This 207-nucleotide RNA was probed chemically with DMS and 2A3.
The 2A3 profile rests on 2,487 reads.
Source: RMDB library ARCHII, as collected in RNAgym.
RNA sequence: GGGAACGACUCGAGUAGAGUCGAAAAGCCUGAUCUCAGGUAGCGACGAGACUGCUCCUGCACUAAGGAGUGUCAGCCCGGGGCUGUUCCCGACCCGGAUCCUGGCAUCAGCUAGGGGACUAAACCUUGAUCCCGGUCACGGGGUGAAGAGGGAAAUUAUACAUUAUUAGUUCGCUAAUAAUGUAUAAAAAGAAACAACAACAACAAC
Reactivity to DMS in 0.01 (KOAc 150mM, MgCl2 10mM, bicine 150mM(pH8.5), 24C), signal-to-noise 2, nucleotides 027 to 156: g020c010c010u000g000a110u010c190u000c010a040g020g000u000a160g010c050g040a070c040g000a170g010a070c030u010g000c020u000c010c000u000g000c160a180c230u000a150a040g000g000a000g030u000g000u020c010a300g020c050c000c030g040g020g000g020c050u040g020u020u000c010c030c000g010a050c030c010c000g000g000a070u000c040c010u020g000g010c050a110u000c110a140g030c070u000a100g000g000g010g000a270c070u000a050a090a100c020c000u000u010g000a050u020c010c000c010g000g020u000c280a160c030g000g010g000g010u000g000a110a130g010a090g010g000g010a070a110a130u000
Reactivity to 2A3 in 0.01 (KOAc 150mM, MgCl2 10mM, bicine 150mM(pH8.5), 24C), signal-to-noise 4, nucleotides 027 to 156: g030c000c000u070g110a270u130c210u050c070a030g060g000u100a050g110c030g060a050c020g020a030g040a080c040u120g020c000u030c000c000u040g020c090a080c300u140a080a020g000g020a020g000u000g010u010c010a010g010c020c000c000g020g000g000g010c070u080g010u000u000c000c000c010g030a060c010c000c000g010g010a020u070c000c000u000g000g000c020a090u070c090a220g010c010u070a010g010g000g010g010a020c040u120a050a060a060c010c000u030u040g030a020u010c000c010c010g000g100u190c150a070c110g010g010g000g020u030g070a040a030g030a070g010g000g010a020a040a000u050